[RMDB]
RNA sequence: GGGAACGACUCGAGUAGAGUCGAAAACUCAAUCACUACGGUGAUUGAGAAUGCUUACGCCUCAAUCAAGCUUGAUUGGAGUGCCUCGAGCAGAUAUAGACUGAAACAUUUAGUAUGGUCAAGCAGGGAGCAACAGCUCGAGUACGCUCGAGCUGAAAUUUAAUGAGGGGUUCGCCCCUCAUUAAAUAAAAGAAACAACAACAACAAC
Reactivity to 2A3 in 0.01 (KOAc 150mM, MgCl2 10mM, bicine 150mM(pH8.5), 24C), signal-to-noise 2, nucleotides 027 to 156: c000u010c000a000a000u000c000a000c000u030a020c220g150g010u030g000a000u000u000g000a000g050a020a040u030g000c010u020u010a060c050g010c020c000u010c010a010a030u010c030a040a140g190c090u160u120g010a010u000u040g160g080a020g050u160g030c000c000u030c080g020a000g000c000a000g110a010u210a030u020a110g030a010c030u060g090a060a070a020c040a040u180u120u120a080g010u060a080u200g040g010u050c010a020a010g020c020a010g060g070g060a060g000c010a010a090c000a010g030c000u000c000g010a010g030u000a040c230g020c090u010c010g000a000g000c000u000g020a010a010
Reactivity to DMS in 0.01 (KOAc 150mM, MgCl2 10mM, bicine 150mM(pH8.5), 24C), signal-to-noise 2, nucleotides 027 to 156: c000u010c000a010a000u000c000a030c000u000a080c300g070g020u010g000a000u000u000g010a010g020a050a030u000g000c030u010u010a160c040g030c010c000u000c030a040a020u000c030a130a230g040c140u010u000g010a020u000u000g010g020a030g020u000g020c050c060u010c060g010a060g000c010a070g010a140u000a100u010a120g020a100c000u000g020a160a130a090c040a050u010u010u000a050g020u000a070u000g010g020u000c050a060a080g000c080a080g000g010g040a170g030c040a120a100c020a030g040c010u000c010g000a050g030u000a100c240g020c000u000c000g010a030g040c000u000g000a020a020